[RMDB]
RNA sequence: GGGAACGACUCGAGUAGAGUCGAAAAAAAAGAUAUGGACACAAGGGAGCCUAAUAUAACGACGAAGAGCCUCGGAAACGAGGCUCAGAGUUAGAUUAGGCGAAGAACUUGUGUCCUAAGUCAAAAACCUGAAUAGAUUGUUCGCAAUCUAUUCAGGAAAAGAAACAACAACAACAAC
Reactivity to DMS in 0.01 (KOAc 150mM, MgCl2 10mM, bicine 150mM(pH8.5), 24C), signal-to-noise 2, nucleotides 027 to 126: a080a100a050a070g010a010u020a300u000g000g000a000c020a010c020a010a010g000g000g000a110g000c010c020u000a000a010u000a060u010a010a040c010g000a170c240g000a210a090g000a020g010c000c020u000c000g030g000a100a080a170c010g010a010g040g020c000u000c010a000g000a180g000u000u000a000g000a030u000u000a000g000g010c000g020a020a100g000a130a120c000u010u000g010u010g000u000c000c000u010a010a070g020u020c030a140a110a080a180a100

Chemical mapping of a 177-nucleotide RNA with DMS. The RNA was probed in 150 mM KOAc, 10 mM MgCl2 and 150 mM bicine (pH 8.5) at 24 C. The DMS profile rests on 1,994 reads. DMS adducts were read by reverse transcription with MarathonRT.